[RMDB]
The record gives the reactivity of an RNA of 207 nucleotides to DMS and 2A3. Values cover nucleotides 27 to 156. Reactivities are rounded to 0.1 and cut off at 0 and 3.
RNA sequence: GGGAACGACUCGAGUAGAGUCGAAAAAAAGAAACGUCCUUUCUGGCACAAGCCGCUGUGAGUUCAUCAAACUUUGGUAGCAUGUUCCGACAAGGGCCGCACCAACUCGCCCAUGCGUCGACGACGUAAAACUUGUUCGAGCGGAUGGCUGCGGCAACAGAAAGUCAUACUUCGGUAUGACUUUCUGAAAAGAAACAACAACAACAAC
Reactivity to DMS in 0.01 (KOAc 150mM, MgCl2 10mM, bicine 150mM(pH8.5), 24C), signal-to-noise 1, nucleotides 027 to 156: a060a000a130g000a120a100a070c070g030u000c010c020u000u000u000c090u020g000g000c000a010c100a040a060g020c000c110g060c000u000g010u000g000a010g010u010u000c100a220u000c240a060a030a010c050u000u010u020g020g010u000a060g000c020a180u000g000u000u000c010c000g000a100c040a050a050g040g020g020c000c040g030c070a060c030c000a060a080c020u000c030g010c000c000c010a300u000g030c070g030u000c000g000a130c150g000a100c040g070u000a070a070a080a100c180u020u000g020u020u000c080g000a120g080c050g000g000a070u000g000g010c050u000g020c010g010g000c020a060a100
Reactivity to 2A3 in 0.01 (KOAc 150mM, MgCl2 10mM, bicine 150mM(pH8.5), 24C), signal-to-noise 3, nucleotides 027 to 156: a020a000a000g120a030a050a010c050g020u020c000c000u020u050u030c080u120g020g000c040a040c010a150a030g020c000c030g010c070u040g080u100g090a030g010u070u070c070a120u040c080a200a030a040c030u030u070u100g040g010u030a030g040c020a040u050g000u030u080c000c010g020a040c100a100a040g020g080g000c020c000g000c010a010c010c000a050a130c040u060c040g030c000c000c020a010u120g040c000g040u040c030g110a090c080g000a000c010g030u030a010a090a030a130c060u100u080g100u170u090c030g020a060g030c020g020g090a030u030g020g010c090u070g000c000g000g030c020a020a000
Notes
Source: RMDB library OK3TST, as collected in RNAgym.